[RMDB]
RNA sequence: GGGAACGACUCGAGUAGAGUCGAAAAUAACGCUUAGAUGUCCGCACAACUCCGGACUCGCGGUGAGCGAUACAGCGCAGCGCGAGCAUCGCAGCUGCUGUGCGGACGGCUAGCAAGGGCUAGCCACCGAUCGGUAUACCUUCGGGUAUACCGAUCGAAAAGAAACAACAACAACAAC
Reactivity to DMS in 0.01 (KOAc 150mM, MgCl2 10mM, bicine 150mM(pH8.5), 24C), signal-to-noise 2, nucleotides 027 to 126: u020a110a080c150g000c160u030u000a100g000a090u060g000u000c000c000g000c000a020c010a040a060c010u000c280c020g010g000a080c020u000c000g030c000g000g000u000g000a060g000c000g020a210u040a110c240a180g000c000g020c000a030g000c030g000c000g020a030g000c140a090u000c000g020c120a120g020c170u000g000c140u000g010u010g000c000g000g000a020c020g000g000c000u020a000g020c000a200a130g030g000g010c000u020a030g000c000c000a040c180
Reactivity to 2A3 in 0.01 (KOAc 150mM, MgCl2 10mM, bicine 150mM(pH8.5), 24C), signal-to-noise 4, nucleotides 027 to 126: u180a040a020c030g060c140u110u170a060g010a150u220g030u000c000c000g050c000a020c000a070a210c020u060c070c010g000g030a060c010u010c000g000c030g080g120u040g030a010g010c020g130a120u120a300c130a100g010c000g000c010a030g100c000g000c000g000a010g000c080a210u060c010g000c040a010g000c030u260g000c010u000g010u000g000c000g010g000a000c000g000g010c000u000a000g000c050a090a220g180g060g000c010u000a000g000c010c000a010c010